[RMDB]
RNA sequence: GGGAACGACUCGAGUAGAGUCGAAAACUUACGUGCUGAGGGACGAACUCUAUAACCAUCAUGAUAGUUCCUAUGUAUAAUUUCCUGGUUAAAAUGAGUAGAAUCGCCGUUUGGGAGGGUUCACUGCGAAUGCUAGAGUCUUCGGACUCUAGCAUUCAAAAGAAACAACAACAACAAC
Reactivity to DMS in 0.01 (KOAc 150mM, MgCl2 10mM, bicine 150mM(pH8.5), 24C), signal-to-noise 2, nucleotides 027 to 126: c130u000u010a050c120g020u000g000c070u000g000a030g020g010g010a170c050g010a090a050c070u000c020u000a100u020a090a080c160c060a040u020c160a080u010g000a050u010a170g020u000u000c030c000u000a020u010g020u000a110u030a070a090u000u010u000c060c040u000g000g010u000u000a050a020a090a080u020g000a060g000u010a140g010a110a070u010c040g020c020c020g020u000u010u000g000g010g000a060g000g000g000u000u010c040a040c060u000g000c220
Reactivity to 2A3 in 0.01 (KOAc 150mM, MgCl2 10mM, bicine 150mM(pH8.5), 24C), signal-to-noise 1, nucleotides 027 to 126: c000u070u100a010c040g110u040g000c100u060g110a050g050g010g020a020c030g090a070a060c000u000c030u010a050u050a120a060c010c010a090u190c060a080u230g070a050u070a050g030u010u030c000c020u060a080u130g070u000a140u040a170a090u070u050u030c000c000u020g000g050u070u080a130a100a030a160u100g100a050g050u090a080g070a040a030u000c010g030c010c020g040u110u120u060g090g000g040a080g100g000g070u000u060c010a000c060u070g050c060